[RMDB]
The data come from the RNA Mapping Database (RMDB), library OK1LIB. An RNA of 177 nucleotides, treated with 2A3 and DMS and read out base by base. For DMS, 2,981 sequencing reads were counted. For DMS the reverse transcriptase was MarathonRT.

RNA sequence: GGGAACGACUCGAGUAGAGUCGAAAACGAAAAUAAAAACUUUUUUAACGAAUUCUUUUGUGACAUGCAAUUGAGAUGGCUUGCAGGAUAGUCGAUAAACGGUAUUGUUCAUGGAAGGGUCACAGGACAUUUUACGUCACUUCGGUGACGUAAAAUGAAAAGAAACAACAACAACAAC
Reactivity to 2A3 in 0.01 (KOAc 150mM, MgCl2 10mM, bicine 150mM(pH8.5), 24C), signal-to-noise 3, nucleotides 027 to 126: c030g060a030a070a070a040u300a080a200a050a040a050c120u220u140u020u150u270u210a110a020c080g000a050a030u120u030c020u000u100u020u020g010u000g030a000c050a040u050g040c050a060a110u100u180g040a090g040a070u130g010g000c000u030u010g000c020a000g050g090a060u060a050g010u020c030g010a030u050a070a090a030c060g000g000u060a100u040u090g070u030u000c000a010u100g030g060a000a030g020g000g010u000c000a000c040a070g060g040a000
Reactivity to DMS in 0.01 (KOAc 150mM, MgCl2 10mM, bicine 150mM(pH8.5), 24C), signal-to-noise 2, nucleotides 027 to 126: c030g020a090a050a040a080u090a070a040a070a100a020c060u000u000u010u030u000u050a110a110c040g020a160a030u010u030c020u000u000u030u020g000u000g020a030c080a030u030g000c030a030a070u010u030g020a160g000a090u000g000g010c030u000u000g010c100a120g000g000a010u010a000g000u010c020g030a080u020a080a020a060c170g000g000u000a020u030u000g000u050u000c040a040u000g000g030a010a020g000g000g010u040c010a060c120a080g010g000a160